[RMDB]
RNA sequence: GGGAACGACUCGAGUAGAGUCGAAAAGUAGGACAAUAGUGAAAUUAUCAUGACUGUCAAAAUUCCAUCAAUAAAAGCAUUAUCCGUACGAAACAUAGUAAUAAAUUGAUGACGCAAUGAUGAUUCACCUAUACCGGCAGUUCGCUGCCGGUAUAGGAAAAGAAACAACAACAACAAC
Reactivity to DMS in 0.01 (KOAc 150mM, MgCl2 10mM, bicine 150mM(pH8.5), 24C), signal-to-noise 1, nucleotides 027 to 126: g040u040a090g020g010a090c020a080a080u020a250g080u000g000a020a170a150u030u000a030u000c000a040u000g000a130c240u010g020u000c000a040a070a050a110u000u020c080c030a070u000c030a040a040u000a040a050a140a070g060c080a000u010u030a080u010c050c060g020u000a130c030g030a060a080a180c160a070u000a130g000u010a000a030u040a080a060a060u000u000g000a080u000g000a090c150g050c160a050a020u000g000a020u000g030a070u000u000c040a020
Reactivity to 2A3 in 0.01 (KOAc 150mM, MgCl2 10mM, bicine 150mM(pH8.5), 24C), signal-to-noise 1, nucleotides 027 to 126: g050u100a020g000g160a070c070a050a110u040a100g070u020g080a100a080a130u200u100a080u110c020a010u000g020a050c090u060g000u070c000a000a000a000a230u160u040c020c000a040u080c020a090a000u130a170a090a040a030g040c010a010u020u020a010u100c010c030g060u080a070c110g080a000a070a000c020a050u060a010g100u210a120a070u070a210a240a000u050u100g040a030u020g000a030c000g000c070a030a000u040g000a020u000g020a040u110u000c020a030
Chemical mapping of a 177-nucleotide RNA with DMS and 2A3. DMS adducts were read by reverse transcription with MarathonRT. The reactions ran in a buffer of 150 mM KOAc, 10 mM MgCl2 and 150 mM bicine (pH 8.5), at 24 C.